[RMDB]
RNA sequence: GGGAACGACUCGAGUAGAGUCGAAAACUCUCACCGCGCGUACUAACAUACUGCUGUAUCAUUCACAGAAACGCUACGAAGCUCGAGAAGUUGGAGUAAUACAUCCCGAACUUCGGCCCACUGGUGCAUACCUGACUACCUUCGGGUAGUCAGGUAUAAAAGAAACAACAACAACAAC
Reactivity to 2A3 in 0.01 (KOAc 150mM, MgCl2 10mM, bicine 150mM(pH8.5), 24C), signal-to-noise 5, nucleotides 027 to 126: c020u030c000u000c020a020c050c020g030c000g020c010g050u060a040c030u140a190a060c020a140u180a070c020u060g090c020u020g020u080a070u100c040a090u190u040c020a020c000a040g080a090a110a000c010g000c010u030a020c040g080a040a020g010c000u020c010g060a080g020a080a030g060u090u070g020g050a070g030u190a090a060u080a130c040a110u040c000c000c000g020a040a020c010u040u050c000g040g030c020c000c010a050c070u070g030g020u060g020c040
Reactivity to DMS in 0.01 (KOAc 150mM, MgCl2 10mM, bicine 150mM(pH8.5), 24C), signal-to-noise 2, nucleotides 027 to 126: c080u000c000u000c000a020c080c010g020c050g000c060g000u060a030c100u020a070a080c070a060u020a150c060u010g000c040u000g000u000a080u000c080a110u020u100c060a030c140a070g020a070a070a060c070g020c040u020a050c030g000a190a100g000c000u000c000g000a110g020a070a090g020u000u000g000g000a130g000u000a120a070u010a080c100a080u000c000c010c050g000a040a070c120u000u000c020g000g000c040c010c010a060c070u020g000g020u000g030c190
The record gives the reactivity of an RNA of 177 nucleotides to 2A3 and DMS.
Values are in units of 0.01, from 0 to 300, in steps of 10.
2A3 adducts were read by reverse transcription with SuperScript II with manganese.
For 2A3, 3,632 sequencing reads were counted.
For DMS the reverse transcriptase was MarathonRT.
The RNA was probed in 150 mM KOAc, 10 mM MgCl2 and 150 mM bicine (pH 8.5) at 24 C.